[RMDB]
RNA sequence: GGGAACGACUCGAGUAGAGUCGAAAAGAACAGAUGUCACAGUAAAAGCAUGCCAAUCUAAGUGUGCUCAAGGGAUUUUAUGCUAGUUGGCCUUAGGUUCUGGUAAGAGAUAAGGUGGGGCAUCUGCCCUGAUAUGUCGGUUCGCCGACAUAUCAGGAAAAGAAACAACAACAACAAC
Reactivity to 2A3 in 0.01 (KOAc 150mM, MgCl2 10mM, bicine 150mM(pH8.5), 24C), signal-to-noise 4, nucleotides 027 to 126: g090a070a030c010a000g010a010u020g000u040c010a000c010a030g100u130a030a120a040a010g080c030a040u060g000c010c010a010a020u000c010u020a010a030g090u060g100u130g300c030u070c110a020a060g090g030g020a030u110u120u100u240a110u300g050c020u010a060g220u080u090g010g000c020c000u020u000a020g000g040u150u080c110u150g010g010u070a110a050g110a020g010a280u080a190a020g210g120u040g020g000g000g010c000a010u020c000u020g010c010
Reactivity to DMS in 0.01 (KOAc 150mM, MgCl2 10mM, bicine 150mM(pH8.5), 24C), signal-to-noise 5, nucleotides 027 to 126: g020a140a280c020a020g010a020u010g010u000c000a030c040a070g010u010a070a090a140a170g010c110a070u000g000c030c040a040a040u000c050u010a050a030g000u000g020u000g010c040u000c070a060a080g000g010g010a080u000u010u010u000a070u030g010c010u010a070g010u010u000g010g000c000c010u000u010a020g000g010u000u010c140u010g020g000u010a050a080g000a110g010a060u010a070a120g000g010u000g010g010g010g000c020a020u010c020u000g010c090